The record gives the reactivity of an RNA of 177 nucleotides to 2A3 and DMS. For DMS, 2,382 sequencing reads were counted. Source: RMDB library OK2TST, as collected in RNAgym.
RNA sequence: GGGAACGACUCGAGUAGAGUCGAAAAGACGGCGCGGUGCUGGAACUGCUGAUGGCGGUCGGCGCGGCCGCGACCAUGGUGAUCGUGCCCGCGGGCAUUCUCGGCGGCACCGAACUGGCCGAGGUGAUAGGGCUAUUUAGUUCGCUAAAUAGCCCUAAAAAGAAACAACAACAACAAC
Reactivity to 2A3 in 0.01 (KOAc 150mM, MgCl2 10mM, bicine 150mM(pH8.5), 24C), signal-to-noise 1, nucleotides 027 to 126: g070a030c070g030g030c260g040c030g300g100u080g050c030u100g080g080a070a070c040u050g000c000u120g080a080u210g030g020c060g010g010u040c030g100g020c040g010c110g030g000c000c010g000c000g070a010c030c010a170u210g080g010u090g020a200u020c030g030u030g040c020c010c020g000c100g050g090g000c070a080u230u010c040u040c090g030g000c060g020g000c010a030c040c040g000a090a050c010u040g110g080c050c000g030a000g000g060u030g000a050
Reactivity to DMS in 0.01 (KOAc 150mM, MgCl2 10mM, bicine 150mM(pH8.5), 24C), signal-to-noise 2, nucleotides 027 to 126: g000a170c080g010g000c040g020c020g010g030u010g000c040u000g020g020a130a040c070u010g020c040u000g010a110u020g020g020c040g000g010u000c030g010g010c060g010c020g020g000c050c040g000c030g000a050c020c010a120u010g010g020u000g000a070u000c020g010u010g010c140c000c010g030c090g010g020g010c030a060u000u000c020u010c000g000g020c020g010g000c040a050c070c040g000a070a060c040u000g010g030c000c010g010a080g000g010u010g000a170